This 177-nucleotide RNA was probed chemically with DMS and 2A3. High 2A3 reactivity points to a flexible backbone, as in loops and unpaired stretches. The data come from the RNA Mapping Database (RMDB), library OK1LIB. The 2A3 profile rests on 859 reads.
RNA sequence: GGGAACGACUCGAGUAGAGUCGAAAAUGGGUGAGUUGCUUCAUCAUUUUGGUUUAAUUUUUUUUACAGUAGUUGGAACCAAGAAGCCGUCACUCGUGAAGUAACUUCGCUUGGACCUCACUUGCGGAAUAUAGGGUGCGUUCGCGCACCCUAUAUUAAAAGAAACAACAACAACAAC
Reactivity to DMS in 0.01 (KOAc 150mM, MgCl2 10mM, bicine 150mM(pH8.5), 24C), signal-to-noise 2, nucleotides 027 to 126: u030g000g000g020u010g010a100g030u020u020g010c020u000u000c010a190u030c120a130u010u030u010u000g030g000u010u010u000a030a000u000u000u000u000u020u000u020u060a120c230a190g020u010a000g000u000u000g020g060a000a000c000c000a000a060g020a010a020g000c030c210g000u020c010a020c020u010c090g000u010g010a080a090g000u000a030a110c040u000u000c020g050c000u000u000g000g010a120c030c000u030c040a110c030u000u000g000c030g000g000
Reactivity to 2A3 in 0.01 (KOAc 150mM, MgCl2 10mM, bicine 150mM(pH8.5), 24C), signal-to-noise 2, nucleotides 027 to 126: u080g010g020g000u010g000a060g050u090u020g090c000u010u000c020a170u050c070a200u240u120u060u060g010g000u000u010u000a100a060u020u060u050u000u030u060u140u200a220c170a100g160u180a080g060u090u110g100g000a000a000c000c000a040a000g070a000a000g040c020c050g070u040c000a040c080u010c000g000u040g000a040a040g030u100a070a000c010u110u090c000g000c020u000u010g040g030a120c040c000u020c000a050c030u010u030g000c030g000g080